This 177-nucleotide RNA was probed chemically with DMS and 2A3. Source: RMDB library OK1LIB, as collected in RNAgym. Reactivities are rounded to 0.1 and cut off at 0 and 3. For DMS, 10,773 sequencing reads were counted. The RNA was probed in 150 mM KOAc, 10 mM MgCl2 and 150 mM bicine (pH 8.5) at 24 C.
RNA sequence: GGGAACGACUCGAGUAGAGUCGAAAAGACGCUGAUGCGAUCGACUGUAAGAUAGAUAUAAUGAGCAGACAGAUACGUACGGCAAGUAUCGUCGCCAGAAUUACAGUCGCAAAUUGCCGUACGAAGAGAUGGAGUAGUGAUUCGUCACUACUCCAUCAAAAGAAACAACAACAACAAC
Reactivity to DMS in 0.01 (KOAc 150mM, MgCl2 10mM, bicine 150mM(pH8.5), 24C), signal-to-noise 5, nucleotides 027 to 126: g000a100c040g000c010u000g040a150u010g030c010g020a160u040c020g010a020c000u010g000u000a000a010g020a180u020a090g000a250u030a120u020a110a110u000g000a090g010c020a140g000a020c030a110g020a070u020a010c000g000u010a010c020g000g000c000a010a060g000u020a020u020c030g030u000c030g000c010c010a030g020a080a140u010u000a000c000a000g010u000c000g000c290a040a080a060u010u000g000c000c000g010u000a070c170g000a170a080g000a150
Reactivity to 2A3 in 0.01 (KOAc 150mM, MgCl2 10mM, bicine 150mM(pH8.5), 24C), signal-to-noise 9, nucleotides 027 to 126: g070a010c030g020c060u210g080a160u290g050c020g070a090u050c010g000a010c000u000g010u010a020a000g060a160u180a090g170a070u160a060u070a200a190u190g060a040g040c090a050g010a030c010a030g020a030u060a080c000g040u030a000c000g000g000c010a050a000g010u020a020u070c030g000u000c000g010c010c000a050g060a050a000u020u010a000c000a000g000u000c010g000c030a050a090a030u040u020g000c000c000g000u020a080c060g040a060a050g040a010